Chemical mapping of a 207-nucleotide RNA with 2A3 and DMS. 2A3 adducts were read by reverse transcription with SuperScript II with manganese.
[RMDB]
RNA sequence: GGGAACGACUCGAGUAGAGUCGAAAACCAUCGACUGUCACCAGAUGCUGCAUCACCUGAUCACUGAUGGCUCAACGGUAUCCGGCGGUACAACUGAAUACUUGCAGCUGCCUUUUGAGCGGGUUGGAAAAUCGGAGGUUGUUCGCAACCUCCGAAACAUUGCUUACAGCUUCGGCUGUAAGCAAUGAAAAGAAACAACAACAACAAC
Reactivity to 2A3 in 0.01 (KOAc 150mM, MgCl2 10mM, bicine 150mM(pH8.5), 24C), signal-to-noise 3, nucleotides 027 to 156: c010c000a030u090c040g120a060c070u110g030u100c030a010c060c020a040g040a100u060g020c000u030g010c000a030u040c000a050c020c010u070g040a060u010c060a010c080u040g030a060u080g110g000c030u030c030a050a040c040g000g000u020a040u020c020c020g060g010c000g030g040u070a090c050a080a080c120u130g030a100a050u090a090c040u050u140g020c000a030g000c000u060g010c000c000u000u090u030u120g000a010g020c000g000g050g000u030u020g020g050a040a070a040a120u020c000g000g000a000g020g000u000u020g030u060u040c100g000c080a000a000c010c000u010c000c000g000a000a000a000
Reactivity to DMS in 0.01 (KOAc 150mM, MgCl2 10mM, bicine 150mM(pH8.5), 24C), signal-to-noise 1, nucleotides 027 to 156: c010c000a130u010c040g000a100c050u000g000u000c030a080c040c020a070g010a140u010g000c010u000g000c060a170u000c090a030c020c000u010g000a100u000c040a130c130u010g000a060u010g010g000c050u000c010a080a100c100g020g000u010a040u010c020c000g000g020c030g000g000u000a040c090a100a080c050u000g010a100a020u000a030c030u000u000g060c020a050g020c020u000g020c010c010u010u000u010u000g020a070g040c040g020g010g000u000u020g030g000a050a040a070a100u010c020g000g000a050g050g050u000u000g000u000u010c230g000c020a040a010c010c000u020c000c010g050a000a020a070